[RMDB]
RNA sequence: GGGAACGACUCGAGUAGAGUCGAAAAGAUAUGGACCAGAACUACAGCCUGUAGAGCGAUGAAAUCGGAAACGAUGGAGCUCGAAAGGCUGCUGGUCCUAAGUCAAAGGUCGACUUCGGUCGACCAAUCCGAGAAACAACUUCGGUUGUUUCUCGGAAAAAGAAACAACAACAACAAC
Reactivity to DMS in 0.01 (KOAc 150mM, MgCl2 10mM, bicine 150mM(pH8.5), 24C), signal-to-noise 1, nucleotides 027 to 126: g000a060u000a300u000g000g010a000c000c010a010g000a050a060c070u010a300c010a010g040c000c000u000g000u000a300g000a000g060c000g000a050u040g010a070a180a030u010c010g020g000a130a170a050c010g040a000u000g000g000a080g050c040u000c000g020a080a300a020g000g000c010u000g000c000u000g000g000u000c000c000u000a010a060g010u000c070a040a040a100g010g020u000c030g010a030c000u000u020c240g000g020u000c000g010a000c000c000a010a060

This 177-nucleotide RNA was probed chemically with DMS. Source: RMDB library TTRDEL, as collected in RNAgym. The DMS profile rests on 637 reads. The RNA was probed in 150 mM KOAc, 10 mM MgCl2 and 150 mM bicine (pH 8.5) at 24 C.